[RMDB]
RNA sequence: GGGAACGACUCGAGUAGAGUCGAAAAACAGACUUUGCCCGGAUGCAGCGGUGGCGAAUAUCGCACAAUGGGCGGAUGCCUGAUGCAGCGACGCCGCGUGAGGGAUGAAGGCAUCCGGGCUCCGGGCUAUAAUAUUGUUAUUCGUAACAAUAUUAUAAAAAGAAACAACAACAACAAC
Reactivity to 2A3 in 0.01 (KOAc 150mM, MgCl2 10mM, bicine 150mM(pH8.5), 24C), signal-to-noise 3, nucleotides 027 to 126: a000c050a030g140a050c040u130u130u090g000c000c000c000g010g000a010u000g010c010a020g020c020g040g030u040g020g010c020g030a110a030u170a020u160c050g000c010a010c020a040a110u120g020g000g000c180g080g100a110u300g020c010c000u050g020a070u040g000c020a050g000c020g000a010c020g020c010c000g050c000g030u050g040a090g050g090g020a020u070g080a060a110g200g000c000a000u000c000c000g000g000g000c000u000c000c000g000g060g000c010
Reactivity to DMS in 0.01 (KOAc 150mM, MgCl2 10mM, bicine 150mM(pH8.5), 24C), signal-to-noise 2, nucleotides 027 to 126: a060c130a100g020a100c040u010u020u000g030c010c010c000g000g000a010u000g040c010a160g010c000g000g040u030g000g000c040g000a130a090u020a090u030c070g000c010a170c050a080a080u020g000g000g000c000g000g030a080u060g040c000c000u010g010a070u010g030c070a090g030c010g000a020c070g020c030c000g020c000g020u000g000a090g020g000g020a080u040g020a140a300g030g030c040a000u000c000c000g020g000g000c000u040c030c060g000g000g000c300